[RMDB]
RNA sequence: GGGAACGACUCGAGUAGAGUCGAAAAUGGAAUCAUUCCUGCUGUGUGGGGAAUGGCUCCUACCAGUUGAACCAUGCCAGGCAGAGAAGGGGUCACAUGACCAUUCACUUUGCUCUUGAAGAAUAAAUGCUACAUGAUCUUUCGAGAUCAUGUAGCAAAAAGAAACAACAACAACAAC
Reactivity to 2A3 in 0.01 (KOAc 150mM, MgCl2 10mM, bicine 150mM(pH8.5), 24C), signal-to-noise 1, nucleotides 027 to 126: u030g000g080a010a030u030c000a010u010u000c000c010u070g300c040u090g230u070g070u190g110g030g000g000a030a000u010g000g010c010u010c000c000u000a070c010c010a030g090u210u240g070a100a090c010c000a040u170g000c020c010a000g030g000c000a010g000a010g010a120a000g130g050g020g000u010c010a050c040a150u270g030a040c010c000a010u050u090c040a030c010u050u070u050g010c000u000c000u120u180g060a090a040g090a170a040u190a130a030a040
Reactivity to DMS in 0.01 (KOAc 150mM, MgCl2 10mM, bicine 150mM(pH8.5), 24C), signal-to-noise 2, nucleotides 027 to 126: u010g020g010a040a020u010c010a010u000u000c000c010u000g060c050u020g000u000g050u010g020g020g000g010a040a030u000g010g010c030u010c000c020u000a170c010c000a130g040u000u000g050a080a120c090c040a100u000g040c070c100a110g000g010c010a050g000a020g030a090a230g010g000g020g000u000c040a140c210a070u020g000a040c010c010a090u000u020c050a150c040u010u000u000g000c020u000c080u000u000g010a220a090g010a080a080u010a050a100a130

The record gives the reactivity of an RNA of 177 nucleotides to 2A3 and DMS. It was measured as part of the RMDB library OK2TRN. DMS adducts were read by reverse transcription with MarathonRT. For DMS, 1,426 sequencing reads were counted. Values cover nucleotides 27 to 126.